[RMDB]
RNA sequence: GGGAACGACUCGAGUAGAGUCGAAAACACAGGAUCGUGUGGAAGUCCUGCUCGGGGCGGAAGCAUUAAAACCAUUCGAGCUAGUCAAUGCGUGGCGUGUCUCUCCGCAGCGUGUUGGCGAAUGUAGCAAGCUGCCUCUCGUUCGCGAGAGGCAGAAGAUUAGUUUUGACUUCGGUCAAAACUAAUCAAAAGAAACAACAACAACAAC
Reactivity to 2A3 in 0.01 (KOAc 150mM, MgCl2 10mM, bicine 150mM(pH8.5), 24C), signal-to-noise 3, nucleotides 027 to 156: c070a000c010a020g130g080a220u200c130g010u050g000u000g030g030a060a010g050u020c030c030u040g020c060u040c050g000g020g010g000c030g030g050a030a000g050c030a060u070u230a020a030a040a120c030c010a040u080u130c090g030a040g040c020u030a020g000u040c000a010a020u010g000c000g020u030g050g000c010g060u100g080u040c030u010c040u000c160c020g010c000a000g010c030g000u030g010u010u000g010g010c000g010a030a030u190g020u100a020g080c050a070a050g040c020u010g000c000c000u000c000u000c000g030u060u050c110g010c020g030a000g000a010g040g000c000a000g000a000a000
Reactivity to DMS in 0.01 (KOAc 150mM, MgCl2 10mM, bicine 150mM(pH8.5), 24C), signal-to-noise 1, nucleotides 027 to 156: c070a100c020a100g030g010a040u000c150g010u000g060u030g010g000a230a140g000u000c000c000u000g020c070u000c070g000g000g000g000c020g030g010a180a110g000c130a150u000u000a030a120a090a110c020c010a150u000u020c040g020a110g030c030u020a140g010u010c020a040a040u000g010c000g040u000g010g090c000g030u020g000u000c090u000c040u030c300c010g000c000a050g020c000g000u000g020u000u000g020g000c000g000a060a010u000g010u000a140g000c050a060a090g030c000u000g020c000c000u000c000u000c010g020u000u010c300g000c050g000a040g000a030g010g000c020a000g000a000a150